RNA sequence: GGGAACGACUCGAGUAGAGUCGAAAAGAAGGUCGAGUGCACGACCAGAGAGUGCGGUGAGAGACCGACAAAGAGUUCGAAUCGGAACGAACUUCCGCAAACGAUCGACUGAAGAUCGAAGUGAGAAAGGAUCAGUAGUCUUCGGACUACUGAUCCUAAAAGAAACAACAACAACAAC
Reactivity to DMS in 0.01 (KOAc 150mM, MgCl2 10mM, bicine 150mM(pH8.5), 24C), signal-to-noise 2, nucleotides 027 to 126: g000a030a080g030g000u000c000g000a300g010u030g000c060a100c040g000a020c060c090a060g000a180g000a130g000u000g010c000g000g050u000g000a210g060a130g000a030c000c000g030a090c120a040a120a100g010a180g000u000u010c000g000a030a100u010c090g000g090a100a100c000g000a040a000c070u000u040c020c000g030c140a070a160a100c050g000a030u030c000g040a220c260u030g100a130a110g000a000u000c000g000a160a270g050u000g000a050g010a030a040
Reactivity to 2A3 in 0.01 (KOAc 150mM, MgCl2 10mM, bicine 150mM(pH8.5), 24C), signal-to-noise 1, nucleotides 027 to 126: g050a090a080g000g000u000c000g020a060g090u300g010c130a020c080g050a000c000c040a000g070a000g000a000g030u300g010c010g000g000u050g000a060g000a000g080a000c000c000g000a000c000a000a070a000g170a000g000u010u000c000g020a070a070u220c060g080g000a110a000c010g020a000a000c000u000u060c000c010g020c110a000a150a000c000g030a000u000c000g080a160c230u220g150a090a040g000a020u000c000g000a030a020g000u000g000a080g140a020a130